[RMDB]
RNA sequence: GGGAACGACUCGAGUAGAGUCGAAAAAUUAACGCAGCCUAAAUGAAGAGCAGGACAAAAGGUUCGUCUGCAAACACUCCAUGGUAGACAGAGGAUGGGGAAAUGGAUGUGGACUAUUUGGAAGUAACCAAAGGUUUUGAUUCGUCAAAACCUUUGGAAAAGAAACAACAACAACAAC
Reactivity to 2A3 in 0.01 (KOAc 150mM, MgCl2 10mM, bicine 150mM(pH8.5), 24C), signal-to-noise 1, nucleotides 027 to 126: a000u080u080a000a000c030g040c040a000g020c010c000u080a140a160a140u120g080a040a050g000a030g050c020a030g090g020a030c020a050a160a020a020g120g000u080u090c030g050u020c020u000g000c000a000a080a000c010a020c030u070c040c000a020u020g100g000u040a070g090a110c080a090g140a100g060g000a000u030g000g000g000g000a050a130a020u110g030g000a030u010g020u030g030g060a020c000u030a130u150u020u060g070g040a080a020g040u040a020a030
Reactivity to DMS in 0.01 (KOAc 150mM, MgCl2 10mM, bicine 150mM(pH8.5), 24C), signal-to-noise 3, nucleotides 027 to 126: a080u000u010a090a120c090g000c060a060g010c000c030u000a040a070a110u010g000a060a070g000a110g020c000a040g010g000a070c060a060a070a080a140g020g010u010u000c090g010u000c030u000g010c050a050a050a140c070a070c050u000c050c040a040u010g020g000u000a070g000a060c080a040g000a110g000g010a060u010g000g000g000g000a040a060a050u000g000g020a090u010g010u000g000g000a090c090u000a090u000u010u010g000g000a060a090g000u010a090a140